[RMDB]
RNA sequence: GGGAACGACUCGAGUAGAGUCGAAAAGUCGCACAGAUAGCAUGCCAAGCGCUGCUUGUAAAACAGCAACAAAAAUAACUGUAAACAACACAGAUUACGCUCCAGCUUACGCUAAAGCUGCGUGAGUUAAUCUCCUUUUGGAGCUGGACUGAUUAGACGAGCUUAGCAAGUUCGCUUGCUAAGCUCGAAAAGAAACAACAACAACAAC
Reactivity to 2A3 in 0.01 (KOAc 150mM, MgCl2 10mM, bicine 150mM(pH8.5), 24C), signal-to-noise 1, nucleotides 027 to 156: g110u070c070g000c080a050c000a120g070a080u130a030g000c070a040u150g000c030c000a140a000g000c080g010c090u020g040c020u150u070g060u040a060a100a030a080c030a000g120c000a010a050c000a130a030a080a000a000u140a040a000c010u060g110u060a000a150a110c060a140a000c050a000c000a120g020a030u090u150a050c080g000c000u000c000c000a000g000c000u000u000a000c000g050c000u040a100a150a150g090c210u110g000c000g000u000g020a000g000u000u000a000a170u020c080u040c000c010u220u190u020u100g000g000a000g000c000u030g000g000a050c030u040g090a270u100u000a000g010a030